[RMDB]
Background: The record gives the reactivity of an RNA of 177 nucleotides to DMS and 2A3. For 2A3 the reverse transcriptase was SuperScript II with manganese. The reactions ran in a buffer of 150 mM KOAc, 10 mM MgCl2 and 150 mM bicine (pH 8.5), at 24 C. The 2A3 profile rests on 40,527 reads. For DMS, 42,409 sequencing reads were counted.
RNA sequence: GGGAACGACUCGAGUAGAGUCGAAAAGGAGCUUCCCUUAUCUAUACAGUGACGAGAAACGCUGGCCUGGUUAAGAGACGUGGAGGUGGGACGGGAGAGACUCUGGGAGAGAAGUGGAAAGCUCGUCACCUGAUAAUAAAUUCGUUUAUUAUCAGGUAAAAGAAACAACAACAACAAC
Reactivity to DMS in 0.01 (KOAc 150mM, MgCl2 10mM, bicine 150mM(pH8.5), 24C), signal-to-noise 9, nucleotides 027 to 126: g010g000a090g010c030u000u000c000c000c010u010u020a050u020c040u010a100u030a100c070a050g020u010g000a070c060g010a100g020a110a090a110c070g000c040u010g010g000c050c040u000g000g010u010u030a090a100g010a120g000a070c100g010u020g000g000a100g000g010u020g000g000g010a110c100g000g000g000a120g000a100g000a050c070u010c050u010g000g010g000a100g000a060g010a070a070g010u020g010g010a060a060a080g000c010u000c000g000u020c060
Reactivity to 2A3 in 0.01 (KOAc 150mM, MgCl2 10mM, bicine 150mM(pH8.5), 24C), signal-to-noise 9, nucleotides 027 to 126: g130g010a030g010c030u020u010c000c000c000u000u050a100u000c040u010a120u030a120c030a040g030u020g090a040c040g050a040g090a130a100a010c050g010c040u030g030g030c000c010u080g030g040u090u100a130a030g050a010g010a080c060g030u100g020g040a100g030g070u220g030g010g030a040c070g020g010g000a070g000a000g010a040c030u010c040u110g020g040g000a050g010a010g010a060a030g020u110g030g040a130a030a010g020c010u010c010g060u020c010